[RMDB]
RNA sequence: GGGAACGACUCGAGUAGAGUCGAAAAAAAGCGUGUGCAGUACGUUCGAUAAAAGUUUAACAGUUUCGGUAGACGCGCAGAGGAGGACAGGUGGUUCGAACACGUGGUUAGGUAACACAAUUGUGAAUCUAAACUACGAUUUCGAUCGUAGUUUAGAAAAAGAAACAACAACAACAAC
Reactivity to DMS in 0.01 (KOAc 150mM, MgCl2 10mM, bicine 150mM(pH8.5), 24C), signal-to-noise 9, nucleotides 027 to 126: a050a060a090g000c040g030u000g010u000g010c060a080g020u000a050c090g010u000u000c070g010a110u010a060a060a080a090g010u010u000u000a050a070c110a090g010u000u000u000c040g010g010u000a060g000a060c070g010c070g010c070a060g000a110g010g000a080g000g000a060c080a050g010g020u000g010g010u000u000c070g010a050a040c080a060c100g030u000g010g000u000u000a050g000g000u000a050a050c060a040c100a070a120u000u010g010u000g010a100a100
Reactivity to 2A3 in 0.01 (KOAc 150mM, MgCl2 10mM, bicine 150mM(pH8.5), 24C), signal-to-noise 5, nucleotides 027 to 126: a000a000a000g040c050g010u060g020u030g050c030a020g010u050a010c020g000u000u050c030g020a020u090a160a170a040a050g040u040u110u140a120a060c050a050g010u000u040u070c020g020g020u050a020g000a130c030g000c010g000c040a010g010a020g050g020a020g000g030a020c020a040g030g030u050g020g040u060u070c030g050a050a020c040a010c060g020u030g000g030u060u060a050g020g030u060a080a010c050a000c020a110a140u160u130g060u030g100a060a020